Structure probing data (DMS and 2A3) for a 177-nucleotide construct. Values cover nucleotides 27 to 126. For DMS the reverse transcriptase was MarathonRT. For 2A3, 137,934 sequencing reads were counted. Source: RMDB library OK1LIB, as collected in RNAgym. For 2A3 the reverse transcriptase was SuperScript II with manganese.
[RMDB]
RNA sequence: GGGAACGACUCGAGUAGAGUCGAAAAUGCCUGGAGAAGGUUGACACCACAUUCAAAGUGGUGUUAGCGGAGCUGGGGCCUUUCCAGCGAGAGCUUCGUAGAGGCGAUCGCUCUGCCUGCAAUAAAACAGUAUAGGUAUGUUCGCAUAUCUAUGCUGAAAAGAAACAACAACAACAAC
Reactivity to DMS in 0.01 (KOAc 150mM, MgCl2 10mM, bicine 150mM(pH8.5), 24C), signal-to-noise 9, nucleotides 027 to 126: u020g000c020c000u010g010g010a100g010a110a110g010g010u000u000g000a020c000a010c000c000a000c000a080u030u050c300a100a160a120g010u000g000g000u000g000u000u000a020g000c030g000g010a120g010c020u010g010g000g010g010c030c060u000u010u000c030c070a060g000c020g000a090g010a230g000c010u000u010c060g030u030a100g010a030g000g000c010g000a140u010c060g000c000u000c040u010g010c020c040u010g010c120a090a070u030a060a080a090a160
Reactivity to 2A3 in 0.01 (KOAc 150mM, MgCl2 10mM, bicine 150mM(pH8.5), 24C), signal-to-noise 9, nucleotides 027 to 126: u130g040c010c010u040g050g030a130g020a100a040g090g000u020u030g000a000c000a000c010c010a000c010a050u220u270c120a150a120a040g000u000g000g000u000g000u000u010a010g000c010g030g030a040g010c030u070g020g010g060g000c010c020u040u070u010c010c020a000g000c010g000a030g000a000g020c010u050u050c070g120u090a060g010a020g110g030c010g020a100u030c040g000c000u020c010u030g030c010c020u060g020c040a070a130u140a180a090a030a020